The record gives the reactivity of an RNA of 207 nucleotides to DMS and 2A3.
The 2A3 profile rests on 913 reads.
The RNA was probed in 150 mM KOAc, 10 mM MgCl2 and 150 mM bicine (pH 8.5) at 24 C.
Source: RMDB library OK3TST, as collected in RNAgym.
For DMS, 1,449 sequencing reads were counted.

RNA sequence: GGGAACGACUCGAGUAGAGUCGAAAACAGGACAACACGUCGGGGGUGUACUAGUGAAGUGAUUUUCCAAAUGUGCUACUCAGACCUGUAGCAUCAGCAUCACCGGAUAAUUUGUUAGAAAUUCCAACUGUUAGGCCCCACUUUAGACCAACUGAAACCCCUCGGUAAUAUUCGUAUUACCGAGGGGAAAAGAAACAACAACAACAAC
Reactivity to DMS in 0.01 (KOAc 150mM, MgCl2 10mM, bicine 150mM(pH8.5), 24C), signal-to-noise 1, nucleotides 027 to 156: c000a100g030g020a180c020a040a050c120a080c170g090u020c060g040g000g000g000g050u010g000u000a070c040u000a080g000u000g010a100a070g060u020g000a200u000u000u000u000c050c020a020a070a180u000g030u020g000c010u010a010c000u000c030a300g000a060c180c140u000g000u020a020g020c020a050u010c170a130g020c030a020u000c010a060c010c020g030g000a080u020a000a080u000u000u000g020u010u010a130g010a020a100a220u000u000c030c000a120a070c050u000g020u000u000a170g070g050c050c020c160c000a070c060u000u010u000a100g010a030c000c010a040a080c010u000g000a050a070a170
Reactivity to 2A3 in 0.01 (KOAc 150mM, MgCl2 10mM, bicine 150mM(pH8.5), 24C), signal-to-noise 2, nucleotides 027 to 156: c010a000g020g090a000c000a050a060c000a110c090g060u050c030g040g000g000g020g000u050g020u080a080c060u060a030g070u020g120a160a010g040u030g040a080u030u030u100u070c010c000a070a040a020u160g010u000g010c000u010a000c020u030c120a150g070a160c030c060u030g000u010a000g030c010a000u110c020a040g060c010a030u010c000a020c040c000g000g000a000u050a010a170u140u040u050g060u050u040a040g030a060a070a030u170u020c040c000a030a000c020u020g010u040u010a020g060g040c000c000c060c000a080c000u100u060u110a030g020a020c050c030a010a030c090u300g040a300a020a060